[RMDB]
RNA sequence: GGGAACGACUCGAGUAGAGUCGAAAAACUGGUAAAUCAACACUGAUUAAUAUUUUACGUGAAAUGAUAGGUGCUGAUAAUUACUCAGCCGUGACACUGCAGUACCUGAUGCAAGAACGCUUUGCAAUCAGGCUUGUACAUUCGUGUACAAGCCUGAAAAAGAAACAACAACAACAAC
Reactivity to 2A3 in 0.01 (KOAc 150mM, MgCl2 10mM, bicine 150mM(pH8.5), 24C), signal-to-noise 1, nucleotides 027 to 126: a010c030u030g000g000u050a160a000a100u040c010a040a070c020a010c040u070g030a110u050u140a180a110u120a130u160u110u060u060a110c080g110u140g160a060a030a040u090g020a080u010a170g040g000u020g060c000u010g040a010u010a180a100u100u060a090c040u020c100a000g080c030c010g000u010g010a030c060a010c080u080g000c030a020g030u060a030c000c020u100g000a040u030g030c030a010a020g030a160a070c030g020c060u000u010u060g030c010a000a070
Reactivity to DMS in 0.01 (KOAc 150mM, MgCl2 10mM, bicine 150mM(pH8.5), 24C), signal-to-noise 1, nucleotides 027 to 126: a120c030u010g010g020u010a010a040a060u010c030a020a020c000a010c010u000g020a160u010u000a100a080u020a050u000u030u000u000a090c290g020u010g010a030a080a040u010g000a060u000a160g000g030u000g010c050u000g020a010u000a090a080u020u010a000c060u010c010a010g000c010c070g000u000g020a090c070a030c030u010g000c080a110g050u000a070c020c000u000g010a090u000g000c010a000a000g000a060a070c250g010c180u020u000u010g000c080a120a150